[RMDB]
RNA sequence: GGGAACGACUCGAGUAGAGUCGAAAAUUAAAGGUGGUGGUGGAGGAGGUACGCCUCCAGCUGCUCAGCCGACGUACCGCACACACGCCUUUUCGGCAUAGAGCAGCAAUAGGGUAUGCAUAAAAAACAUUGGGGAUUGAUUCGUCAAUCCCCAAUGAAAAGAAACAACAACAACAAC
Reactivity to 2A3 in 0.01 (KOAc 150mM, MgCl2 10mM, bicine 150mM(pH8.5), 24C), signal-to-noise 2, nucleotides 027 to 126: u090u060a100a020a030g050g010u050g050g020u030g030g000u040g000g040a000g000g040a030g050g000u030a030c040g000c020c000u000c010c000a020g010c000u020g000c010u020c020a030g000c020c000g020a040c040g040u030a050c020c020g030c000a030c010a000c000a040c100g060c010c010u130u140u060u070c000g000g000c010a050u100a050g010a020g030c010a000g000c020a000a040u090a080g050g000g030u110a050u070g080c040a030u230a070a080a010a000a020a030
Reactivity to DMS in 0.01 (KOAc 150mM, MgCl2 10mM, bicine 150mM(pH8.5), 24C), signal-to-noise 3, nucleotides 027 to 126: u020u020a060a100a130g010g000u000g000g010u000g010g020u000g020g030a050g020g020a060g020g010u000a040c110g000c010c000u000c020c020a090g010c000u010g000c000u000c000a100g030c010c010g010a090c170g000u010a030c060c030g030c080a100c210a100c180a060c100g020c030c120u000u000u000u000c000g000g020c000a190u010a060g000a000g000c000a010g010c010a080a030u010a050g000g000g000u000a030u010g010c100a070u040a000a030a040a100a080a080